[RMDB]
RNA sequence: GGGAACGACUCGAGUAGAGUCGAAAAGUGAACUACAGCGACCGCUACCUGGGUGCCGACGCGGCAGGCACCAAGGGCACCAUCGAAGCCAUAACCCGACCGUCCCGCUGUAUGACGAUCUACCACGCGUUGUACCAGCUUUCGAGCUGGUACAACGAAAAGAAACAACAACAACAAC
Reactivity to DMS in 0.01 (KOAc 150mM, MgCl2 10mM, bicine 150mM(pH8.5), 24C), signal-to-noise 1, nucleotides 027 to 126: g010u010g000a100a070c040u000a130c020a020g030c040g020a150c130c020g000c040u000a210c010c000u020g000g000g000u000g010c000c010g000a130c170g010c040g030g050c050a280g000g000c000a020c030c040a050a060g040g010g000c100a130c090c070a020u000c050g000a080a090g000c040c050a050u020a090a070c030c060c010g020a080c020c040g000u010c050c040c020g000c020u020g000u000a080u010g000a040c070g000a070u040c080u000a180c050c080a090c160g000
Reactivity to 2A3 in 0.01 (KOAc 150mM, MgCl2 10mM, bicine 150mM(pH8.5), 24C), signal-to-noise 1, nucleotides 027 to 126: g030u050g040a050a030c040u020a000c040a030g000c010g040a040c000c020g070c080u090a060c010c020u020g040g000g000u000g030c000c020g040a050c060g000c060g100g000c020a050g010g000c000a000c020c010a010a030g000g000g000c050a040c050c000a030u070c050g100a080a010g040c000c020a020u070a050a060c000c040c050g040a030c010c020g040u010c000c000c010g010c050u040g020u050a080u120g060a070c050g010a010u000c020u090a070c010c060a040c080g080